[RMDB]
RNA sequence: GGGAACGACUCGAGUAGAGUCGAAAAGCGCUGAGGGCGUGAUGGGCCUGCUCACCAGUCCUUGCGAGCAGCCGGCAGAAGGAUCCUCCUCUCCGCACUCAGAUGAGGAAACAGGCUUAUGUGGAAUCACUCAUCAGAGACCACAGGGCAGGUAAGCCUAUAACUUACGCUUCGGCGUAAGUUAUAGAAAAGAAACAACAACAACAAC
Reactivity to DMS in 0.01 (KOAc 150mM, MgCl2 10mM, bicine 150mM(pH8.5), 24C), signal-to-noise 3, nucleotides 027 to 156: g020c070g010c010u000g000a060g020g020g020c030g040u000g010a080u000g020g040g010c090c010u000g050c020u010c010a050c030c040a140g030u010c090c030u000u000g040c010g010a070g010c040a070g020c050c020g030g060c080a090g030a100a080g000g000a180u010c070c050u000c060c010u000c030u000c040c010g010c050a160c060u000c030a110g000a110u000g000a050g010g000a130a110a120c060a050g000g010c020u000u010a070u000g060u000g000g000a100a210u000c070a150c030u000c060a050u000c110a170g010a080g000a300c010c010a030c040a050g020g020g030c000a100g030g010u030a080a130g020c050
Reactivity to 2A3 in 0.01 (KOAc 150mM, MgCl2 10mM, bicine 150mM(pH8.5), 24C), signal-to-noise 3, nucleotides 027 to 156: g070c050g000c040u030g040a090g030g060g030c040g050u090g050a120u240g040g000g010c050c020u010g000c010u020c010a140c060c030a030g100u070c030c030u090u100g050c040g010a000g000c020a000g030c050c040g060g000c090a050g030a280a070g040g040a080u190c010c050u030c000c000u000c040u000c010c010g010c010a010c000u020c020a040g050a240u100g030a050g020g070a040a040a030c020a070g060g000c020u080u080a130u240g000u000g010g040a040a050u080c010a040c130u090c050a200u110c030a090g000a000g040a030c010c000a020c010a000g000g000g000c000a000g000g050u060a070a020g000c000